[RMDB]
RNA sequence: GGGAACGACUCGAGUAGAGUCGAAAAGAUAUGGAGAUUUGGGAGCUCUCAUAUCGGAAACGAUAUACGCGAGAGCGACGAUCAUGUCUCCUAAGUCAAAACAUUACCGAGUUCGCUCGGUAAUGAACCAAUAACCUCUCUUCGGAGAGGUUAUUGGAAAAGAAACAACAACAACAAC
Reactivity to DMS in 0.01 (KOAc 150mM, MgCl2 10mM, bicine 150mM(pH8.5), 24C), signal-to-noise 3, nucleotides 027 to 126: g000a010u000a090u010g000g000a000g000a020u000u010u000g000g010g000a030g020c000u000c000u000c020a040u000a000u000c000g020g010a020a030a050c010g000a010u000a010u010a100c300g040c300g010a010g000a020g040c000g010a050c210g010a040u020c000a010u010g010u000c000u000c000c000u010a000a060g000u010c010a120a080a090a210c010a000u000u000a000c000c000g000a020g010u010u020c220g000c000u010c010g000g010u000a000a000u000g000a060a170
Reactivity to 2A3 in 0.01 (KOAc 150mM, MgCl2 10mM, bicine 150mM(pH8.5), 24C), signal-to-noise 2, nucleotides 027 to 126: g000a000u010a010u070g000g000a000g010a000u010u010u090g000g010g010a010g000c000u010c000u000c020a000u010a000u020c000g000g000a010a020a000c010g000a000u010a000u050a070c300g030c090g140a020g000a000g000c000g040a060c000g000a000u010c000a020u010g000u000c000u000c000c000u000a020a010g000u000c030a080a000a080a130c010a020u000u000a000c010c000g000a000g020u030u120c200g050c150u000c000g000g000u000a000a000u000g000a000a020